Conditions: 150 mM KOAc, 10 mM MgCl2 and 150 mM bicine (pH 8.5), 24 C. The record gives the reactivity of an RNA of 177 nucleotides to 2A3 and DMS. The DMS profile rests on 1,542 reads. For 2A3 the reverse transcriptase was SuperScript II with manganese. The 2A3 profile rests on 1,313 reads.
RNA sequence: GGGAACGACUCGAGUAGAGUCGAAAAACAAACCCCACACACACCAAGUAUCCAUGAAGCCUGGUUAUCCUUAUAACCUCAGAGCGGUUUGGAGAGGGUUAGGAACUUGCAGAUGGUCACAUAAUCGUCCUUAGACCAAGUUCGCUUGGUCUAAGGAAAAAGAAACAACAACAACAAC
Reactivity to 2A3 in 0.01 (KOAc 150mM, MgCl2 10mM, bicine 150mM(pH8.5), 24C), signal-to-noise 1, nucleotides 027 to 126: a000c010a000a060a020c020c020c020c000a010c000a000c020a000c010a000c050c000a030a010g010u010a110u120c000c000a010u080g150a070a010g020c000c000u030g000g060u090u020a080u030c040c000u160u170a080u080a150a060c000c000u040c050a040g000a020g170c060g010g000u030u030u070g000g010a050g000a010g040g020g000u030u030a060g020g030a000a030c040u080u070g000c000a000g030a260u030g040g030u040c030a030c000a110u170a130a060u160c080g040
Reactivity to DMS in 0.01 (KOAc 150mM, MgCl2 10mM, bicine 150mM(pH8.5), 24C), signal-to-noise 2, nucleotides 027 to 126: a100c150a050a100a140c060c010c010c040a070c080a050c100a080c060a090c070c010a050a120g010u000a150u000c010c030a060u020g020a080a120g000c010c030u000g010g020u020u010a020u000c080c050u000u000a050u030a040a050c010c000u000c080a100g010a120g030c110g000g000u000u000u000g010g000a020g000a120g000g000g000u000u000a100g010g000a060a060c030u000u000g000c110a020g000a120u000g020g000u010c070a060c120a080u010a050a110u020c100g030